[RMDB]
RNA sequence: GGGAACGACUCGAGUAGAGUCGAAAAAGGGAUGUUUUAGACGGUACAGAUAUUAGUGGCCUCUUAGAAGGUAUUACGUCUAGUACUAGUGCUGGUUAUCCUAUGAACUUGACAGGAAAUGUCAAUCUUAAGAAAAACUACUAUUCUGCACCUGCAGGACUGCUCCAGAAUUCGUUCUGGAGCAGUCAAAAGAAACAACAACAACAAC
Reactivity to 2A3 in 0.01 (KOAc 150mM, MgCl2 10mM, bicine 150mM(pH8.5), 24C), signal-to-noise 2, nucleotides 027 to 156: a000g060g010g010a030u080g060u010u070u070u100a070g010a020c000g030g030u040a000c080a080g020a070u040a070u230u210a080g040u040g130g040c090c030u010c020u130u110a070g000a300a020g080g000u090a090u070u100a010c030g020u010c000u020a040g000u000a020c000u090a070g040u020g130c080u020g050g000u000u070a000u020c000c000u040a100u150g020a040a030c030u010u000g000a010c010a090g050g190a080a270a150u040g020u060c000a030a020u070c020u100u180a070a030g020a070a100a040a030a010c050u110a000c020u010a060u140u000c020u000g010c050a070c110c070u140g010c090a000g050